Description
Source: RMDB library OK1LIB, as collected in RNAgym. An RNA of 177 nucleotides, treated with DMS and 2A3 and read out base by base.

RNA sequence: GGGAACGACUCGAGUAGAGUCGAAAAUCAAAGUAGCAUAUUAAUAAUCGUCGUAUGCUACUGAGAGUAUGUGACGAUUGUUACUACACAUACUAUAUUAGUCAGUGUAGUAAGUGAACUGACUGAAGAUAGUUAUGGGAUUCGUCUCGUAACUAUCAAAAGAAACAACAACAACAAC
Reactivity to DMS in 0.01 (KOAc 150mM, MgCl2 10mM, bicine 150mM(pH8.5), 24C), signal-to-noise 9, nucleotides 027 to 126: u030c040a070a140a030g010u000a010g000c030a020u000a020u010u010a070a100u020a040a040u010c040g020u000c050g000u000a000u000g000c000u000a020c030u010g000a180g010a110g010u040a080u040g010u010g010a040c030g000a040u000u010g020u010u010a010c020u000a010c010a000c010a100u030a030c020u000a080u040a120u040u010a010g010u010c180a170g010u000g000u000a020g000u000a020a040g000u020g000a110a110c160u010g000a140c030u010g000a140a120
Reactivity to 2A3 in 0.01 (KOAc 150mM, MgCl2 10mM, bicine 150mM(pH8.5), 24C), signal-to-noise 9, nucleotides 027 to 126: u100c040a060a020a010g010u010a000g000c020a010u030a010u090u100a110a140u070a090a020u050c020g020u000c010g000u030a000u000g000c000u010a020c000u010g000a040g000a010g030u110a090u180g140u080g000a000c000g000a020u000u050g030u040u020a010c010u020a000c010a000c000a040u050a020c010u030a030u080a120u300u140a030g010u020c080a020g000u010g020u030a030g010u030a040a040g080u080g100a060a070c060u070g100a030c010u040g030a060a010
DMS adducts were read by reverse transcription with MarathonRT. Conditions: 150 mM KOAc, 10 mM MgCl2 and 150 mM bicine (pH 8.5), 24 C.